[RMDB]
RNA sequence: GGGAACGACUCGAGUAGAGUCGAAAAACAAUCGGCAUCAACCAACCACACCUAGCAUUCCUGCACAUCUGUACCCACGCCUUCUUCAAAGCCAUACUAUUUAUGUGCUCCGGGUCCAUCAUCCACACCAAUGGGGUGGGUUCGCCCACCCCAUUGGAAAAGAAACAACAACAACAAC
Reactivity to 2A3 in 0.01 (KOAc 150mM, MgCl2 10mM, bicine 150mM(pH8.5), 24C), signal-to-noise 5, nucleotides 027 to 126: a000c110a050a060u140c040g030g000c020a020u010c020a050a070c010c020a040a010c010c000a020c010a020c020c020u030a020g040c010a080u060u020c010c000u040g010c010a030c000a080u020c020u040g070u120a100c000c000c010a020c030g030c010c000u030u090c000u080u070c120a130a050a010g010c020c020a040u030a060c050u070a140u130u300u040a090u100g080u110g000c020u000c010c010g020g010g050u000c030c000a030u060c010a040u030c010c010a060c010a030
Reactivity to DMS in 0.01 (KOAc 150mM, MgCl2 10mM, bicine 150mM(pH8.5), 24C), signal-to-noise 2, nucleotides 027 to 126: a090c080a100a100u010c010g010g000c040a020u010c050a110a080c060c120a060a040c140c030a040c010a030c030c010u000a060g010c020a070u020u030c050c000u000g030c060a020c040a020u070c070u000g010u000a190c040c000c040a050c040g020c030c000u000u010c000u000u000c040a120a080a060g050c030c010a030u000a090c170u000a050u000u000u010a060u010g010u000g000c010u020c070c060g000g000g070u000c000c040a040u000c070a080u030c020c000a060c110a110